RNA sequence: GGGAACGACUCGAGUAGAGUCGAAAAGAAGAACUGAAGUAUACAAACCGAUAGCGGAAGAUGUUUACCAUUAUGAUGUAGUAAGUAUGUAUCCGUCUAUUAUGAAAGAAAUGGACAUUCCGUAUGGGGAUGAUUAGCACUUCGGUGCUAAUCAUCCAAAAGAAACAACAACAACAAC
Reactivity to 2A3 in 0.01 (KOAc 150mM, MgCl2 10mM, bicine 150mM(pH8.5), 24C), signal-to-noise 1, nucleotides 027 to 126: g080a020a000g020a010a050c070u080g020a050a040g030u050a110u000a240c080a000a120a000c020c020g030a020u040a040g130c000g000g000a040a020g050a090u060g040u010u000u010a020c000c040a000u130u060a120u300g190a030u110g010u110a030g000u000a070a060g000u000a010u100g090u040a070u000c010c010g020u020c000u010a020u120u050a010u090g220a180a160a030g080a000a050a000u140g010g000a000c030a050u140u030c020c010g000u100a150u120g020g040
Reactivity to DMS in 0.01 (KOAc 150mM, MgCl2 10mM, bicine 150mM(pH8.5), 24C), signal-to-noise 1, nucleotides 027 to 126: g010a080a060g040a110a050c040u020g010a060a060g010u000a090u000a120c080a070a080a120c120c070g010a030u000a020g000c010g010g000a040a100g000a060u000g000u010u000u020a080c040c000a030u000u000a120u010g010a160u000g010u010a030g010u000a010a020g010u000a000u010g010u000a120u000c040c020g040u000c010u000a010u000u000a100u000g000a120a130a120g010a040a040a060u010g030g020a030c080a140u010u000c030c040g040u000a050u010g010g000